[RMDB]
RNA sequence: GGGAACGACUCGAGUAGAGUCGAAAAGAUUUAUGGUGAUGAAACGAAUAUUUCGUGGACUAGAGUUUCAGAUCUGGGCUCUUCACCCAGAAUUUGAAGAAACAACCCUUGGCUGUCUGAGUAAAAACUUGUUCCAUUAAUUCGUUAAUGGAACAAGAAAAGAAACAACAACAACAAC
Reactivity to 2A3 in 0.01 (KOAc 150mM, MgCl2 10mM, bicine 150mM(pH8.5), 24C), signal-to-noise 5, nucleotides 027 to 126: g020a040u160u190u130a130u120g050g010u070g040a120u060g020a030a120a010c070g060a080a020u110a180u170u200u070c030g010u020g020g030a040c060u060a060g010a040g130u000u010u050c020a000g000a020u000c010u010g010g030g000c050u060c070u270u210c080a040c010c000c010a000g040a090a040u030u000u040g040a030a030g040a010a080a050c060a030a040c000c000c010u040u050g040g000c050u040g040u090c050u040g100a060g120u190a010a080a030a010a010
Reactivity to DMS in 0.01 (KOAc 150mM, MgCl2 10mM, bicine 150mM(pH8.5), 24C), signal-to-noise 8, nucleotides 027 to 126: g000a070u010u020u030a040u020g000g010u000g010a100u010g010a140a090a030c040g000a050a070u030a140u020u020u000c020g010u000g000g000a150c090u010a070g000a150g010u020u000u000c020a020g010a040u010c020u000g010g000g010c080u010c150u030u030c220a300c000c010c010a020g010a030a040u000u010u000g000a020a050g000a090a070a080c100a090a110c020c010c010u000u010g000g000c050u010g000u000c030u000g010a200g010u020a030a060a080a050a100